[RMDB]
RNA sequence: GGGAACGACUCGAGUAGAGUCGAAAAGCCGUAAAAGCAUCCGGCGAAUAAGAUGCAUGAGCGAAAGCUCUAAGAUAAUUGGCCGUUUCGUAGGGGCCGUAGACCCUACUUAUUAAUGCUCGAGAUGUGUGGAGCGAUCAUCACGCAAGACUAACAACACUACUAUGGAUUUCGAUCCAUAGUAGUGAAAAGAAACAACAACAACAAC
Reactivity to 2A3 in 0.01 (KOAc 150mM, MgCl2 10mM, bicine 150mM(pH8.5), 24C), signal-to-noise 5, nucleotides 027 to 156: g000c010c000g000u020a090a090a030a010g020c010a020u010c040c010g010g010c030g050a040a070u160a090a030g030a040u060g020c050a030u090g010a000g000c020g010a090a020a000g000c010u010c020u020a060a030g030a090u160a120a100u110u040g040g010c030c030g060u060u070u100c030g000u040a000g010g000g010g010c030c040g010u010a020g050a040c000c000c000u000a010c000u000u020a040u040u150a090a070u120g010c020u020c080g080a110g020a150u050g040u020g020u040g060g020a040g010c030g020a040u070c020a030u060c010a030c050g000c030a040a020g080a140c050u100a060a020c050a030a020
Reactivity to DMS in 0.01 (KOAc 150mM, MgCl2 10mM, bicine 150mM(pH8.5), 24C), signal-to-noise 3, nucleotides 027 to 156: g020c000c010g030u020a030a080a070a130g000c000a050u000c040c020g040g020c030g030a120a110u000a120a100g030a080u010g000c080a140u000g020a030g020c000g030a140a130a280g010c000u000c020u010a060a090g030a160u000a080a120u010u010g010g000c010c030g000u000u010u010c060g030u000a050g000g000g000g000c060c130g000u000a070g000a040c010c000c000u000a020c020u000u000a070u010u010a070a070u020g010c000u000c000g020a150g020a180u000g010u010g010u000g010g000a110g050c040g030a090u000c070a070u000c040a020c000g020c030a080a110g020a300c050u000a030a100c050a080a210